[RMDB]
RNA sequence: GGGAACGACUCGAGUAGAGUCGAAAAGGUAGUGCAGCGCGAAUGCGGUGGUGGAUGCACCGAAGGCUAAAUAUGGCUGAUGACCGAUAGCGGAUAAGUAGAGUGAUUGAAGUGUGAAAAGGAGGAUGAUGAGAAAUGAAAGUGAAUGGAGUGAAUGACCGUGUGUACUGUUCGCAGUACACACGGUAAAAGAAACAACAACAACAAC
Reactivity to 2A3 in 0.01 (KOAc 150mM, MgCl2 10mM, bicine 150mM(pH8.5), 24C), signal-to-noise 1, nucleotides 027 to 156: g030g040u070a040g000u020g020c000a000g000c060g060c010g120a200a110u250g020c030g010g030u040g000g000u020g040g030a040u020g090c000a040c000c000g060a140a000g030g010c040u170a090a100a070u290a040u100g030g000c030u040g010a050u010g030a080c110c000g030a000u030a040g040c080g000g020a070u050a070a010g000u040a010g060a000g010u050g000a070u060u070g010a050a000g020u070g000u000g020a240a070a000a000g070g000a000g030g000a020u000g010a000u050g000a000g000a050a140a000u100g030a050a130a000g060u020g030a050a010u000g030g000a000g040u090g050a000a250u130g030